[RMDB]
RNA sequence: GGGAACGACUCGAGUAGAGUCGAAAAAGUUGAUAUGGAGCCUGCUCGCUUGGAUUUAUACAGCGAAACACAUCGGAAACGAUGUGAUAGAGCUGUAUUGUCAGCGAGCUGGCUCCUAAGUCUGUAAGUUUCGUAUGGAGUUCGCUCCAUACGAAACAAAAGAAACAACAACAACAAC
Reactivity to DMS in 0.01 (KOAc 150mM, MgCl2 10mM, bicine 150mM(pH8.5), 24C), signal-to-noise 1, nucleotides 027 to 126: a130g010u000u010g000a090u000a300u000g000g010a000g000c010c020u000g000c010u010c010g010c010u020u030g010g030a020u010u020u000a000u000a000c000a000g020c010g000a240a130a050c000a000c000a020u010c000g020g000a270a080a220c030g010a010u000g000u000g000a030u020a010g010a300g000c000u000g040u000a000u000u030g000u000c010a040g010c000g000a020g020c000u000g010g000c020u000c000c000u000a010a090g010u000c020u000g000u020a160a200